[RMDB]
RNA sequence: GGGAACGACUCGAGUAGAGUCGAAAAGCAUUAUAUAAUAACUAUGGUUUGCAGUUUGUAGUAAACAACGCAUACACAGAGAGCGUUACAUCAACAAGUAAAAUUGUGUUACCAAACGCAAUUACAGCGUCAACGGAAUAUCAGUUAGAAUACACCGCCGACUACCAGUAUUCGUACUGGUAGUCGGAAAAGAAACAACAACAACAAC
Reactivity to 2A3 in 0.01 (KOAc 150mM, MgCl2 10mM, bicine 150mM(pH8.5), 24C), signal-to-noise 2, nucleotides 027 to 156: g020c010a030u160u000a050u050a030u040a160a070u100a130a050c030u040a100u150g050g050u000u020u060g030c040a060g020u020u080u000g070u170a160g020u100a140a070a040c000a010a010c000g000c010a040u060a120c080a000c040a150g120a010g020a020g060c030g000u000u030a000c020a130u090c020a030a040c000a040a050g060u070a110a070a020a050u000u070g000u010g030u040u020a100c010c000a100a030a000c000g020c000a010a010u060u090a040c020a130g090c050g120u050c030a080a020c050g050g000a010a020u060a000u110c030a020g070u000u060a040g060a070a050u140a130c060a010c070c020g000

Annotation
The record gives the reactivity of an RNA of 207 nucleotides to 2A3. The 2A3 profile rests on 731 reads. Values are in units of 0.01, from 0 to 300, in steps of 10. For 2A3 the reverse transcriptase was SuperScript II with manganese.